[RMDB]
RNA sequence: GGGAACGACUCGAGUAGAGUCGAAAAGGAUCACAUUCACACAGCUACUGUACAUCAGAUGGGAAUUGAAUCUACCUCUCCUGAAUCUAGUCUAGGAACUUCCCCAAAACCAGACUACUGCAUUAGGGUUCAACAAAACAGAACUGAAACCCAUCAAGUAAUGGGGAGGAUUCGUCCUCCCCAUUACAAAAGAAACAACAACAACAAC
Reactivity to DMS in 0.01 (KOAc 150mM, MgCl2 10mM, bicine 150mM(pH8.5), 24C), signal-to-noise 1, nucleotides 027 to 156: g000g000a120u010c040a040c060a110u000u010c030a020c040a120c040a110g040c050u020a070c040u000g020u020a170c030a200u010c020a050g020a050u000g030g020g000a060a170u020u000g000a060a030u030c020u020a210c030c040u020c040u000c050c030u000g000a160a130u010c030u000a030g030u000c020u000a080g010g000a040a150c010u000u000c000c000c000c090a060a060a110a070c020c010a090g030a000c020u000a080c040u010g010c100a090u000u000a080g040g000g000u010u000c050a000a250c040a050a060a060a150c040a090g000a000a090c100u010g010a090a040a060c020c000c030a050u020c030a050a300
Reactivity to 2A3 in 0.01 (KOAc 150mM, MgCl2 10mM, bicine 150mM(pH8.5), 24C), signal-to-noise 1, nucleotides 027 to 156: g050g020a040u070c020a020c010a170u060u030c000a000c040a040c000a100g020c030u060a060c000u080g030u090a120c010a080u090c000a110g050a100u040g010g010g000a080a110u090u090g000a040a040u030c010u060a100c000c040u030c040u040c010c050u030g110a030a020u020c000u010a040g010u000c020u040a080g030g010a080a040c020u130u040c020c030c000c020a000a070a020a070c020c000a000g000a000c000u010a030c090u040g020c010a060u030u070a020g060g020g000u020u060c070a100a100c030a040a200a000a020c050a070g080a080a020c030u040g000a000a020a000c040c000c010a040u120c010a070a090